[RMDB]
RNA sequence: GGGAACGACUCGAGUAGAGUCGAAAAUGCUCGCCGCGGUGUCCACCGGGCUGUUGGGUCUGCUUGGCGGGGAUGUGGACACGCUAGGCGCCGAAGUACCCAUGGCCAAACCGGGUGUGCCACGGUCGAGCUAUUCUAUCUUCGGAUAGAAUAGCUCAAAAGAAACAACAACAACAAC
Reactivity to DMS in 0.01 (KOAc 150mM, MgCl2 10mM, bicine 150mM(pH8.5), 24C), signal-to-noise 2, nucleotides 027 to 126: u000g010c020u000c020g010c020c000g010c020g010g010u000g000u010c150c030a080c000c020g020g020g000c000u000g020u000u000g020g000g020u000c030u010g020c020u000u000g010g010c010g020g010g000g010a130u000g000u000g010g010a250c090a070c000g000c010u000a040g000g010c010g040c170c160g000a110a060g010u010a040c030c010c000a040u010g000g000c060c090a070a120a210c240c090g000g010g000u000g020u000g000c000c010a020c010g000g000u010c110
Reactivity to 2A3 in 0.01 (KOAc 150mM, MgCl2 10mM, bicine 150mM(pH8.5), 24C), signal-to-noise 2, nucleotides 027 to 126: u060g010c000u010c030g020c000c000g020c030g030g010u040g020u080c050c050a070c030c000g040g010g000c000u020g160u060u060g000g020g000u030c030u080g000c000u030u010g010g030c020g000g020g070g000a070u210g100u200g220g030a030c020a030c060g010c010u020a030g050g000c000g020c040c050g080a060a000g020u070a000c020c000c010a030u030g020g000c020c000a170a070a030c110c040g090g010g000u030g040u030g000c010c010a010c000g000g040u040c060